[RMDB]
RNA sequence: GGGAACGACUCGAGUAGAGUCGAAAAGCCGAAACCUGGCGCGCCAUGCCGUCGCCCAGUGCGCACACGGCGUCGUAGGGCAUCCCCGCGAACUUGACAAAGACCGAGUCCGUGUCGCCGUAAACCACGCGCACGCGGUAGCGCGCGCCGGCGGCGGGAUACCUCGCCAUUUCGAUGGCGAGGUAUCAAAAGAAACAACAACAACAAC
Reactivity to 2A3 in 0.01 (KOAc 150mM, MgCl2 10mM, bicine 150mM(pH8.5), 24C), signal-to-noise 1, nucleotides 027 to 156: g010c000c020g040a160a030a020c010c040u080g000g000c000g000c000g000c010c020a060u110g010c000c000g040u070c040g170c020c020c040a000g010u020g000c000g000c000a050c000a000c040g000g080c000g000u000c020g020u110a290g020g000g010c000a180u190c020c040c030c020g050c040g070a150a110c020u070u170g080a090c110a180a180a020g040a000c010c050g010a000g030u000c010c000g080u080g030u130c000g010c020c000g050u040a080a100a120c070c020a070c230g000c000g030c000a000c020g000c000g000g000u040a010g060c060g000c000g000c000g040c040c000g000g000c000g000g010c000g000g000

Chemical mapping of a 207-nucleotide RNA with 2A3. It was measured as part of the RMDB library OK3TST. The 2A3 profile rests on 723 reads.